[RMDB]
RNA sequence: GGGAACGACUCGAGUAGAGUCGAAAAAGUGCUAUUCUGGCAUGGAAUUUAGCAAGGAGGGAAGCAUUCAAGUCUAAGACAGCGUCGUCAGAUAAUACGCUACACAACGUGUACCAGAUGUUGAACAAGUGAAAGUGACAGGCCAAAGCCAGCAGCGACCUACAAUGCUGUUCGCAGCAUUGUAGGUAAAAGAAACAACAACAACAAC
Reactivity to DMS in 0.01 (KOAc 150mM, MgCl2 10mM, bicine 150mM(pH8.5), 24C), signal-to-noise 2, nucleotides 027 to 156: a120g010u000g010c000u000a130u000u010c060u000g010g040c070a110u000g000g030a070a100u000u000u000a070g040c060a040a130g010g040a090g020g000g030a090a080g030c040a070u020u010c060a000a140g020u010c040u000a090a120g030a090c020a090g010c030g030u010c040g020u010c050a100g020a110u000a040a090u010a050c040g010c020u010a100c110a100c030a040a020c030g010u000g000u000a090c060c020a060g010a040u000g000u000u000g010a050a050c030a060a100g000u010g010a030a000a090g000u010g010a070c080a070g040g000c000c010a040a020a140g000c000c000a040g040c110a070g020c000g010
Reactivity to 2A3 in 0.01 (KOAc 150mM, MgCl2 10mM, bicine 150mM(pH8.5), 24C), signal-to-noise 5, nucleotides 027 to 156: a000g090u070g020c010u040a060u140u070c040u050g040g010c030a020u080g040g030a070a050u090u140u080a100g020c060a070a050g020g000a020g040g030g010a060a000g020c030a020u060u100c050a090a010g040u000c020u080a050a040g030a050c030a040g010c010g060u040c030g030u070c050a000g010a060u090a080a030u050a100c020g010c050u100a040c070a010c010a130a100c060g040u050g020u050a040c020c000a020g010a070u030g050u080u050g030a100a030c040a080a030g060u070g120a070a030a030g010u040g030a000c030a040g030g030c010c030a010a090a020g010c000c000a000g000c010a010g020c000g030
This 207-nucleotide RNA was probed chemically with DMS and 2A3. Values cover nucleotides 27 to 156. Source: RMDB library OK3TST, as collected in RNAgym. For 2A3, 4,006 sequencing reads were counted. The DMS profile rests on 5,244 reads. Conditions: 150 mM KOAc, 10 mM MgCl2 and 150 mM bicine (pH 8.5), 24 C.